[RMDB]
RNA sequence: GGGAACGACUCGAGUAGAGUCGAAAAGAUAUGGACCUUGUGAGCGAGGAUCGUACGGUGUCGGAAACGACAUUACGGGAGCUCGCAAGGUCCUAAGUCAAAAUCGUCCGACUUCGGUCGGACGAAAGACAUUACCUCAGUUCGCUGAGGUAAUGUCAAAAGAAACAACAACAACAAC
Reactivity to 2A3 in 0.01 (KOAc 150mM, MgCl2 10mM, bicine 150mM(pH8.5), 24C), signal-to-noise 1, nucleotides 027 to 126: g000a000u010a010u040g000g000a000c010c000u010u000g010u020g020a000g000c010g040a300g120g000a030u010c000g000u010a020c140g080g050u030g010u040c000g010g000a000a000a010c010g000a000c010a010u010u010a000c010g000g000g010a020g010c000u010c000g000c000a010a000g000g010u000c000c000u010a000a000g000u010c000a000a010a010a130u030c000g010u010c000c000g000a010c020u070u080c300g120g000u010c000g020g000a000c000g000a000a000a010
Reactivity to DMS in 0.01 (KOAc 150mM, MgCl2 10mM, bicine 150mM(pH8.5), 24C), signal-to-noise 2, nucleotides 027 to 126: g000a010u000a010u010g000g000a010c000c000u000u000g010u000g000a010g020c010g010a120g030g000a020u000c010g020u000a030c300g010g030u000g010u000c000g030g000a000a000a020c000g010a010c000a010u000u000a010c000g010g010g000a010g040c000u000c010g010c000a000a000g020g010u000c000c000u000a000a070g000u000c010a110a060a100a170u010c000g010u000c000c000g000a020c000u000u030c250g040g010u010c000g010g010a000c000g000a000a020a060